This 207-nucleotide RNA was probed chemically with 2A3 and DMS. Values cover nucleotides 27 to 156. The DMS profile rests on 5,009 reads. For 2A3, 2,168 sequencing reads were counted. It was measured as part of the RMDB library M2RFPK.

[RMDB]
RNA sequence: GGGAACGACUCGAGUAGAGUCGAAAAUGGACUUUUUACAGUUCCUACUUAUCCGGUUUUAACGCUGUUUUAUUGGCGCAAAGGUUUACGGAUAAACAACUUAUAAUUAAACCUUUUGUGUGCGAAAAUUGGACGUUUAGGUUCGCCUAAACGUCAACAUAAUCCAAUUCUUCGGAAUUGGAUUAUGAAAAGAAACAACAACAACAAC
Reactivity to 2A3 in 0.01 (KOAc 150mM, MgCl2 10mM, bicine 150mM(pH8.5), 24C), signal-to-noise 4, nucleotides 027 to 156: u120g030g010a040c060u100u100u080u110u170a090c200a070g020u100u070c020c000u040a060c030u030u030a000u010c000c010g020g020u010u030u000u060a070a040c040g000c020u030g160u130u150u120u220a150u160u250g020g000c010g000c010a020a000a000g010g010u000u000u000a000c010g000g010a000u030a050a060a030c040a020a030c020u110u120a080u120a300a080u100u120a010a000a000c000c000u000u040u100u090g100u010g020u030g070c110g090a100a060a050a090u140u170g060g010a000c000g000u000u000u000a000g030g000u030u020c160g060c040c000u000a000a000a000c000g000u000c000a000a000
Reactivity to DMS in 0.01 (KOAc 150mM, MgCl2 10mM, bicine 150mM(pH8.5), 24C), signal-to-noise 2, nucleotides 027 to 156: u000g020g020a070c020u000u000u000u010u000a100c060a130g010u010u000c010c020u000a140c150u010u000a010u000c000c030g000g010u000u000u000u000a210a040c000g020c010u000g020u000u010u000u000a140u050u020g010g000c000g010c000a030a010a030g050g020u000u000u000a140c020g010g020a020u000a020a050a190c030a070a120c100u000u000a170u010a080a180u000u010a030a010a030c000c010u000u010u000u010g000u000g020u010g030c010g000a040a040a130a230u010u000g020g010a020c010g010u000u000u000a000g010g010u010u000c300g000c020c000u000a010a010a000c000g010u000c000a010a070